[RMDB]
RNA sequence: GGGAACGACUCGAGUAGAGUCGAAAAUCGGCUCUGGAGUCCUCCGACCCGUGAGGUCGAGGAUCCCCGCGCAGGGAGGCAGCCACCAGGAGAAAGCGGAGAAGUCACCUCCAGAGAAACCCUCUCCAUGCCACGGGCUUCGGCCCGUGGAAAAGAAACAACAACAACAAC
Reactivity to DMS in 0.01 (KOAc 150mM, MgCl2 10mM, bicine 150mM(pH8.5), 24C), signal-to-noise 4, nucleotides 027 to 129: u020c030g010g010c000u070c000u040g010g000a000g000u020c000c090u000c100c090g010a000c010c020c010g040u080g150a100g020g000u030c050g000a030g050g010a040u020c000c000c000c080g030c050g000c000a140g000g090g000a020g010g020c090a090g000c120c070a110c020c010a010g040g020a080g020a060a160a170g100c130g020g020a080g020a130a100g070u000c070a150c190c030u010c010c060a110g010a110g020a080a100a200c060c000c040u010c000u030c010c020a040u110g000
Reactivity to 2A3 in 0.01 (KOAc 150mM, MgCl2 10mM, bicine 150mM(pH8.5), 24C), signal-to-noise 2, nucleotides 027 to 129: u020c030g020g000c000u010c000u000g020g010a050g100u040c000c000u040c050c060g030a030c000c030c030g160u150g120a200g030g000u000c000g000a000g020g020a030u020c010c000c000c000g000c000g000c050a120g000g020g010a040g020g000c000a020g030c000c000a030c030c020a010g000g000a050g020a020a100a000g030c040g040g020a100g080a130a000g060u000c000a030c110c000u040c000c000a000g000a000g000a080a010a010c020c010c000u020c030u000c010c020a040u100g020